RNA sequence: GGGAACGACUCGAGUAGAGUCGAAAACAGAGGGAGGAAUCCACACGGAGUAGAGCAGAGAAAUCACCUCCAGAGGACCCCUUCAGCGAACAGAGAGCGCUGCGAGCGAGGAGUAAGACCAUAGCGACCACCCGAUUCUUCGGAAUCGGGAAAAGAAACAACAACAACAAC
Reactivity to 2A3 in 0.01 (KOAc 150mM, MgCl2 10mM, bicine 150mM(pH8.5), 24C), signal-to-noise 6, nucleotides 027 to 129: c060a010g020a050g040g030g000a090g020g020a080a070u000c020c000a030c010a000c140g000g010a030g000u200a060g010a030g070c110a030g010a020g050a150a080a030u090c030a040c020c000u000c000c000a000g010a010g020g010a030c020c010c000c000u010u020c030a000g000c010g020a020a010c040a040g060a010g010a020g070c010g000c050u030g040c050g030a050g000c040g020a030g030g000a030g020u070a070a020g030a030c020c000a030u050a020g020c010g050a030c010c020a020
Reactivity to DMS in 0.01 (KOAc 150mM, MgCl2 10mM, bicine 150mM(pH8.5), 24C), signal-to-noise 5, nucleotides 027 to 129: c130a080g040a000g020g080g000a090g040g000a130a040u020c020c030a070c160a200c230g010g020a010g000u060a060g020a090g050c080a100g080a100g020a100a080a080u030c000a130c060c010u050c030c040a050g030a110g020g020a000c170c040c020c020u000u000c050a000g030c000g040a030a040c120a090g050a000g020a070g000c050g030c050u050g020c000g040a090g030c110g030a070g010g000a060g000u020a020a080g010a070c090c010a030u050a090g030c060g010a080c090c070a110